[RMDB]
RNA sequence: GGGAACGACUCGAGUAGAGUCGAAAAGAUAUGGAGCCUCUACCCACCAAUUCCGAAGAACUUCUUCGGAAACGAAGAAGGGAGGAGAUGAGGAGGCUCCUAAGUCAAAGUGAGGUUCGCCUCACAACGAUUAUUUUUUCUUCGGAAAAAAUAAUCGAAAAGAAACAACAACAACAAC
Reactivity to 2A3 in 0.01 (KOAc 150mM, MgCl2 10mM, bicine 150mM(pH8.5), 24C), signal-to-noise 1, nucleotides 027 to 126: g030a030u080a100u170g000g030a000g010c050c020u000c020u060a240c040c040c040a080c050c050a130a280u200u000c000c040g080a210a000g030a040a020c000u030u010c010u010u010c000g000g000a000a000a000c010g000a010a000g000a020a000g010g000g000a030g040g030a070g040a120u190g040a070g100g000a020g000g020c000u010c010c020u030a040a000g020u000c070a050a010a250g000u000g010a000g040g040u070u110c220g110c040c000u000c010a000c000a000a000
Reactivity to DMS in 0.01 (KOAc 150mM, MgCl2 10mM, bicine 150mM(pH8.5), 24C), signal-to-noise 2, nucleotides 027 to 126: g020a080u010a200u020g000g000a020g010c000c000u000c000u030a110c220c110c020a240c120c070a040a240u020u000c000c000g000a150a110g000a150a210c020u010u000c000u010u020c000g000g000a030a050a040c010g000a040a020g010a040a020g000g000g000a040g000g000a110g000a110u000g000a110g020g020a060g000g010c000u000c000c010u010a040a110g010u010c090a070a140a120g000u000g000a010g000g010u060u010c300g010c010c000u000c000a000c010a110a080
An RNA of 177 nucleotides, treated with 2A3 and DMS and read out base by base. The RNA was probed in 150 mM KOAc, 10 mM MgCl2 and 150 mM bicine (pH 8.5) at 24 C.